[RMDB]
The record gives the reactivity of an RNA of 177 nucleotides to DMS and 2A3. The reactions ran in a buffer of 150 mM KOAc, 10 mM MgCl2 and 150 mM bicine (pH 8.5), at 24 C.

RNA sequence: GGGAACGACUCGAGUAGAGUCGAAAAGCCACUGACUACGGUCAGUGGCAAUAAAUCACACCAAACCGCCAAAAGAGAAAAUCUCAGGUGUGAAAAGGCGGAACAGGCUAGGUACGCCUAGCCUGAACCAUUUAGGUCAGUUCGCUGACCUAAAUGGAAAAGAAACAACAACAACAAC
Reactivity to DMS in 0.01 (KOAc 150mM, MgCl2 10mM, bicine 150mM(pH8.5), 24C), signal-to-noise 2, nucleotides 027 to 126: g000c020c000a000c010u000g010a020c000u000a120c110g010g000u000c000a030g010u000g000g010c000a000a010u010a050a150a140u020c020a040c000a000c020c010a080a050a100c000c010g000c030c010a100a090a120a010g000a010g000a230a070a130a160u010c000u000c020a090g000g020u000g000u000g000a030a050a100a070g010g020c030g000g000a160a280c000a000g030g020c000u000a000g010g010u030a080c190g000c010c000u000a000g000c010c020u000g000a020a130
Reactivity to 2A3 in 0.01 (KOAc 150mM, MgCl2 10mM, bicine 150mM(pH8.5), 24C), signal-to-noise 5, nucleotides 027 to 126: g000c000c000a020c000u000g000a000c000u030a010c160g090g010u000c000a000g000u010g000g000c010a010a010u000a000a000a000u140c010a000c000a000c010c030a180a090a140c010c010g000c010c010a040a030a150a020g050a030g030a050a210a200a280u090c010u000c010a020g000g000u010g020u000g020a040a010a050a080g000g010c000g010g000a030a040c000a000g000g000c000u000a000g010g030u040a020c220g100c030c000u010a000g000c000c000u010g000a010a020
Reactivities are given for positions 27 through 126. For DMS the reverse transcriptase was MarathonRT. For DMS, 4,607 sequencing reads were counted.